[RMDB]
RNA sequence: GGGAACGACUCGAGUAGAGUCGAAAAGAAAGCGAGUGCUGAUAGAGAGAAAGAAGGAACACACACGAAAUCUUUCAGCGAAGUGUGUAAAGAAAUCUCUCGACUCCGAGAGAGAAAGCAAAUCGCAGGGAUAUACAUAGUUCGCUAUGUAUAUCCCAAAAGAAACAACAACAACAAC
Reactivity to 2A3 in 0.01 (KOAc 150mM, MgCl2 10mM, bicine 150mM(pH8.5), 24C), signal-to-noise 7, nucleotides 027 to 126: g120a050a060a000g010c010g000a030g050u050g000c000u020g050a060u130a090g030a000g000a000g010a000a170a030g160a070a070g090g070a080a010c040a000c000a000c000a000c070g060a090a100a090u130c100u060u300u150c110a060g070c040g090a120a150g010u000g000u010g000u040a040a030a030g060a020a050a020u010c010u000c000u000c000g020a040c010u000c020c130g060a090g000a020g000a000g010a140a020a010g010c020a000a000a280u030c010g000c010a020
Reactivity to DMS in 0.01 (KOAc 150mM, MgCl2 10mM, bicine 150mM(pH8.5), 24C), signal-to-noise 5, nucleotides 027 to 126: g020a060a080a060g020c030g000a020g010u010g000c000u000g000a160u030a120g010a060g000a030g020a020a060a050g000a170a180g000g010a060a040c030a010c010a010c010a210c050g000a060a080a090u020c160u040u050u040c170a080g000c040g000a110a100g020u000g000u000g000u000a030a030a110g000a060a150a040u010c010u010c000u000c000g000a170c080u000c030c020g020a100g000a150g010a020g000a090a100a020g000c000a000a070a070u000c000g010c010a090
The record gives the reactivity of an RNA of 177 nucleotides to 2A3 and DMS. DMS adducts were read by reverse transcription with MarathonRT. For 2A3, 6,892 sequencing reads were counted. 2A3 adducts were read by reverse transcription with SuperScript II with manganese. Conditions: 150 mM KOAc, 10 mM MgCl2 and 150 mM bicine (pH 8.5), 24 C.